The data come from the RNA Mapping Database (RMDB), library M2RFPK. This 207-nucleotide RNA was probed chemically with 2A3 and DMS. 2A3 adducts were read by reverse transcription with SuperScript II with manganese. For 2A3, 1,593 sequencing reads were counted. The RNA was probed in 150 mM KOAc, 10 mM MgCl2 and 150 mM bicine (pH 8.5) at 24 C.
[RMDB]
RNA sequence: GGGAACGACUCGAGUAGAGUCGAAAAAGUUCGCGCUUCCGUGAAAUGCGAAAAUCGGACGGUGGCUGCAAGUCGCAUCGCAAAACCGCGGCAAGUGGAGUUAGCGAGAGGAGGCUGGGUUUUGGCUAGAACACACGGUACUUCGGUACCGUGUGAAGAUGGACUACAGAUUCGUCUGUAGUCCAUCAAAAGAAACAACAACAACAAC
Reactivity to 2A3 in 0.01 (KOAc 150mM, MgCl2 10mM, bicine 150mM(pH8.5), 24C), signal-to-noise 2, nucleotides 027 to 156: a000g060u060u070c030g000c000g010c100u030u020c040c020g000u020g060a100a090a030u090g010c040g020a020a010a020a110u130c070g050g020a020c040g020g050u040g040g020c040u110g000c070a070a050g060u010c020g000c050a100u010c020g000c070a040a070a010a050c050c010g040c010g070g000c150a130a020g010u080g040g040a070g010u080u080a040g020c000g010a020g010a040g060g000a030g000g000c030u030g030g060g000u010u060u070u100g060g000c020u050a030g080a110a000c010a010c000a000c050g000g040u000a000c010u020u060c140g050g000u000a000c000c000g000u010g000u000g000a010a000
Reactivity to DMS in 0.01 (KOAc 150mM, MgCl2 10mM, bicine 150mM(pH8.5), 24C), signal-to-noise 1, nucleotides 027 to 156: a130g010u000u010c030g010c030g050c110u000u000c020c030g060u000g030a060a050a130u000g020c020g000a050a030a100a150u000c050g010g010a060c050g020g040u000g000g000c060u000g010c030a030a110g010u010c020g040c030a160u000c020g030c030a120a060a090a190c080c030g010c010g010g010c070a070a050g000u000g000g020a090g010u000u010a090g000c030g000a060g000a090g020g000a080g000g000c030u000g010g000g040u000u000u000u010g000g030c060u000a090g020a100a220c000a030c000a000c000g010g000u000a000c000u020u030c300g050g030u000a000c010c000g040u010g060u000g000a010a050